Structure probing data (2A3 and DMS) for a 177-nucleotide construct. 2A3 adducts were read by reverse transcription with SuperScript II with manganese. The reactions ran in a buffer of 150 mM KOAc, 10 mM MgCl2 and 150 mM bicine (pH 8.5), at 24 C. The data come from the RNA Mapping Database (RMDB), libraries RFM100 and RFMREP. DMS adducts were read by reverse transcription with MarathonRT.

RNA sequence: GGGAACGACUCGAGUAGAGUCGAAAAACGUCCGUACGCGGACGAGUUCGUUGCAAGUUCCCGAAAGGAUCCGUAGGACGGAGAUGCCUUGUAACCGAAUUUAACUAGGGGGAAUCAUUAUAAUGAACCAAUCAAUGUGGUUCGCCACAUUGAUUGGAAAAGAAACAACAACAACAAC
Reactivity to 2A3 in 0.01 (KOAc 150mM, MgCl2 10mM, bicine 150mM(pH8.5), 24C), signal-to-noise 3, nucleotides 027 to 126: a000c000g010u000c010c000g040u040a030c250g030c020g100g010a000c000g000a010g000u020u060c070g000u030u090g050c050a040a070g020u030u020c000c000c010g010a020a020a040g060g010a020u020c030c030g010u140a060g100g150a070c000g030g000a020g010a040u130g050c000c000u030u060g050u090a050a030c000c050g030a010a040u070u100u170a190a130c090u150a150g020g000g030g000g050a030a080u060c040a030u050u200a030u100a120a170u090g040a030a080
Reactivity to DMS in 0.01 (KOAc 150mM, MgCl2 10mM, bicine 150mM(pH8.5), 24C), signal-to-noise 4, nucleotides 027 to 126: a150c010g000u000c000c000g040u000a150c180g020c020g020g010a020c000g010a070g000u000u000c060g030u010u000g000c050a080a070g010u000u000c010c000c010g000a070a070a060g000g000a060u000c000c020g010u010a100g010g040a300c060g000g000a020g000a150u020g000c070c000u000u010g000u030a070a110c060c040g000a060a090u030u000u020a030a090c110u000a120g000g000g000g000g020a140a070u010c060a040u010u060a080u040a090a090u030g010a100a270